[RMDB]
RNA sequence: GGGAACGACUCGAGUAGAGUCGAAAAGAUGCCACCACUGCAUAUGCCAAUAGUGUCUUUAACAUUUUGCAGGCGACAACUGCUAAUGUCAGUGCACUUAUGGGUGCUAAUGGCAACAAGAUUGUUGACGCACGUCCCUUCGGGGACGUGAAAAGAAACAACAACAACAAC
Reactivity to 2A3 in 0.01 (KOAc 150mM, MgCl2 10mM, bicine 150mM(pH8.5), 24C), signal-to-noise 3, nucleotides 027 to 129: g070a010u000g000c010c000a050c070c000a010c100u090g000c020a030u020a100u140g070c000c000a040a020u040a050g020u010g090u120c050u000u160u100a030a010c010a010u010u010u040u110g010c010a050g090g000c020g070a020c030a070a030c020u000g040c010u020a030a030u080g030u010c000a000g060u030g160c000a000c000u010u030a040u130g060g000g000u000g000c010u060a150a090u000g000g000c000a030a070c030a010a010g050a070u000u010g000u000u030g000a020c050g000
Reactivity to DMS in 0.01 (KOAc 150mM, MgCl2 10mM, bicine 150mM(pH8.5), 24C), signal-to-noise 1, nucleotides 027 to 129: g030a090u090g000c040c000a040c110c090a130c160u060g010c000a050u030a150u000g080c020c100a070a280u100a030g020u020g040u010c040u000u000u000a010a010c020a020u000u000u000u000g030c080a140g010g040c210g050a120c300a070a100c000u000g020c030u010a050a000u000g020u000c150a000g060u000g020c020a040c010u000u000a210u040g000g000g000u070g010c030u070a140a070u000g040g000c030a000a150c110a000a000g030a140u010u010g000u000u070g030a050c130g040

An RNA of 170 nucleotides, treated with 2A3 and DMS and read out base by base. For DMS the reverse transcriptase was MarathonRT. The RNA was probed in 150 mM KOAc, 10 mM MgCl2 and 150 mM bicine (pH 8.5) at 24 C.